Structure probing data (2A3) for a 177-nucleotide construct. 2A3 is a SHAPE reagent: it acylates the 2'-hydroxyl of flexible nucleotides of all four kinds. The 2A3 profile rests on 1,073 reads. The reactions ran in a buffer of 150 mM KOAc, 10 mM MgCl2 and 150 mM bicine (pH 8.5), at 24 C. It was measured as part of the RMDB library RFM100.
RNA sequence: GGGAACGACUCGAGUAGAGUCGAAAAAACCGAGAAGACUUCUUUUGCCAAUGGCGGGCCAUAUAAAACCUCAGUGGACUAAGCUGCAAAGCCGGUGGAUUACAAAGGCGGAGAGCUCUCAAAUCUUGCGUCUUACAAUAUUCGUAUUGUAAGACGCAAAAGAAACAACAACAACAAC
Reactivity to 2A3 in 0.01 (KOAc 150mM, MgCl2 10mM, bicine 150mM(pH8.5), 24C), signal-to-noise 2, nucleotides 027 to 126: a000a030c040c010g020a040g020a130a060g190a170c040u170u080c020u050u130u110u300g000c010c000a050a100u040g010g000c030g000g040g000c000c000a000u050a000u010a010a020a020a000c000c020u020c050a120g060u160g130g000a010c000u010a020a020g030c000u000g010c030a140a010a000g000c010c000g000g000u000g000g030a020u000u070a110c010a030a000a000g010g000c000g000g030a020g000a000g000c040u020c000u000c010a040a100a120u170c070u000u030